[RMDB]
RNA sequence: GGGAACGACUCGAGUAGAGUCGAAAAGGUCGUCUUUUCGAAGACGACCACUGUCGUUCCCAAAACUUUUCGAAACAUGUCGAAAGACAUGCUGAAACAGAUUUGGUGUGUGUUUCGACACACACAAGACCAAUGUGGGAUUCGUCCCACAUUGGUCAAAAGAAACAACAACAACAAC
Reactivity to 2A3 in 0.01 (KOAc 150mM, MgCl2 10mM, bicine 150mM(pH8.5), 24C), signal-to-noise 3, nucleotides 027 to 126: g020g000u000c000g000u020c020u050u030u040u090c160g130a010a000g000a000c000g010a000c000c000a010c010u020g000u000c000g000u000u000c000c000c000a000a000a000a000c000u060u000u030u010c000g060a020a090a050c010a010u010g000u000c000g040a100a010a020g000a000c010a010u000g010c030u100g050a040a030a020c090a080g100a280u210u230u300g160g020u000g000u000g000u020g020u000u050u110c210g020a010c000a000c010a010c000a000c010a040a010
Reactivity to DMS in 0.01 (KOAc 150mM, MgCl2 10mM, bicine 150mM(pH8.5), 24C), signal-to-noise 2, nucleotides 027 to 126: g030g000u000c000g010u000c000u000u000u000u020c160g000a030a010g010a030c000g020a000c000c010a020c040u000g020u000c010g000u000u000c000c000c000a020a030a150a030c110u000u000u010u000c020g030a150a070a130c040a020u000g000u000c000g010a140a060a230g000a000c010a000u000g030c040u000g000a030a000a040c300a020g010a110u000u000u010g000g000u000g000u010g030u000g010u000u010u010c160g010a030c030a010c000a000c040a020c010a080a070
About this RNA:
Chemical mapping of a 177-nucleotide RNA with 2A3 and DMS. Conditions: 150 mM KOAc, 10 mM MgCl2 and 150 mM bicine (pH 8.5), 24 C. The 2A3 profile rests on 2,743 reads. DMS adducts were read by reverse transcription with MarathonRT. The DMS profile rests on 1,301 reads. For 2A3 the reverse transcriptase was SuperScript II with manganese. Source: RMDB library M2PK50, as collected in RNAgym.